The record gives the reactivity of an RNA of 207 nucleotides to 2A3 and DMS. DMS (dimethyl sulfate) methylates the pairing face of unpaired adenines and cytosines. DMS adducts were read by reverse transcription with MarathonRT.
RNA sequence: GGGAACGACUCGAGUAGAGUCGAAAAUGGUGCAUUCGUGCACCAGACAGAUCCUAAGUCUGCAUCGAUCGGAGAGAGGGCUUUGAUCUAUUCGGAAACGAAUAGGGAGCCUGGUUCCGGGAGCAGAUAUGGAAACGUACAACUAUUCGUAGUUGAAUACCGUAAAAGGAUUCGUCCUUUUACGGUAAAAAGAAACAACAACAACAAC
Reactivity to 2A3 in 0.01 (KOAc 150mM, MgCl2 10mM, bicine 150mM(pH8.5), 24C), signal-to-noise 2, nucleotides 027 to 156: u030g000g010u000g000c010a010u000u120c270g070u070g010c010a010c000c000a000g010a000c000a010g120a080u060c000c000u050a170a040g040u000c010u020g030c030a300u110c100g200a100u080c000g030g000a030g000a010g060a070g010g030g020c000u300u070u040g030a040u020c000u000a000u010u000c000g010g040a060a100a090c010g010a000a000u000a000g010g000g000a010g010c000c010u060g050g000u090u010c000c000g000g030g010a000g000c000a000g010a000u030a040u060g000g060a070a100a030c050g090u150a110c020a040a010c010u070a040u120u100c130g120u050a030g050u100u100g050a130a050
Reactivity to DMS in 0.01 (KOAc 150mM, MgCl2 10mM, bicine 150mM(pH8.5), 24C), signal-to-noise 3, nucleotides 027 to 156: u000g000g020u000g030c000a050u000u000c280g050u000g010c020a020c000c000a000g000a100c060a110g000a160u000c040c010u010a110a250g010u010c010u020g020c000a260u000c110g000a100u010c020g030g000a110g010a120g030a210g020g020g010c030u000u000u000g000a050u000c010u000a010u000u000c010g000g000a150a080a300c010g020a050a030u000a010g000g000g010a020g020c000c010u000g000g000u010u000c000c000g020g000g020a090g030c020a020g040a020u000a180u000g000g000a020a040a160c070g010u000a150c010a020a030c000u000a050u000u010c140g020u000a030g010u000u000g010a200a300